The record gives the reactivity of an RNA of 177 nucleotides to 2A3. For 2A3, 585 sequencing reads were counted. 2A3 adducts were read by reverse transcription with SuperScript II with manganese. It was measured as part of the RMDB library OK1LIB.
RNA sequence: GGGAACGACUCGAGUAGAGUCGAAAAGCUCACCAUGACACGGUAUUGAGGUUAGAAGACAACAUGGUGGCAGAAUGCAAUGGAGAAAUCCGUACCGUGAAGAACUGCUCCAGAUCACCCGGGGCGAGGAUACGCGUCCUUUCGAGGACGCGUAUCCAAAAGAAACAACAACAACAAC
Reactivity to 2A3 in 0.01 (KOAc 150mM, MgCl2 10mM, bicine 150mM(pH8.5), 24C), signal-to-noise 2, nucleotides 027 to 126: g000c080u110c030a020c000c000a060u040g070a080c000a000c020g000g020u030a100u000u300g140a110g140g030u160u130a070g140a200a000g050a030c080a100a060c000a020u030g020g010u080g000g000c000a000g270a030a070u250g020c190a000a140u080g100g090a020g000a180a030a020u020c000c000g000u060a020c000c000g000u090g080a020a100g090a170a000c080u110g000c050u020c000c000a000g000a090u140c020a020c080c120c070g000g000g000g000c020g000a080